[RMDB]
RNA sequence: GGGAACGACUCGAGUAGAGUCGAAAACGUGUCCGUCGGCGUAGCCGACAACAUGCCCAGGUAGCCCAGACCUUCAAGGCUACGGUGCGUUGCGACGCACGGUCUGAUUCUUCACAACGUCGUUCACAAGAUCGGAUCACUUUCGAGUGAUCCGAAAUCGCUUUUAAACAUUCGUGUUUAAAAGCGAAAAAGAAACAACAACAACAAC
Reactivity to 2A3 in 0.01 (KOAc 150mM, MgCl2 10mM, bicine 150mM(pH8.5), 24C), signal-to-noise 4, nucleotides 027 to 156: c020g000u010g010u100c190c070g000u000c010g000g050c240g150u170a080g040c000c000g010a000c020a000a000c010a020u080g010c010c010c010a020g040g010u010a010g000c020c060c170a010g000a010c010c000u020u010c010a020a000g010g000c000u000a010c000g010g000u000g010c000g010u020u100g060c180g090a010c000g020c020a000c020g010g010u000c000u000g010a020u080u060c070u130u140c070a070c050a180a080c100g070u040c020g010u050u070c020a040c020a170a030g040a150u040c010g010g000a000u000c000a000c010u020u100u130c180g080a010g010u000g000a000u000c000c000g000a000a000a000
Reactivity to DMS in 0.01 (KOAc 150mM, MgCl2 10mM, bicine 150mM(pH8.5), 24C), signal-to-noise 1, nucleotides 027 to 156: c060g030u000g000u010c040c020g050u000c000g040g010c060g060u000a190g060c020c000g000a060c040a050a020c020a080u010g030c000c000c050a090g060g060u000a000g000c010c000c100a150g010a060c030c040u000u000c070a060a200g000g020c010u010a010c000g050g040u000g040c030g010u000u010g010c150g060a180c000g070c030a000c050g000g030u000c020u090g010a190u000u010c080u020u010c050a200c050a140a100c110g030u000c000g020u000u000c050a030c010a130a100g010a150u010c000g000g000a010u020c020a020c010u000u000u050c210g000a000g050u000g020a000u000c010c000g000a000a040a050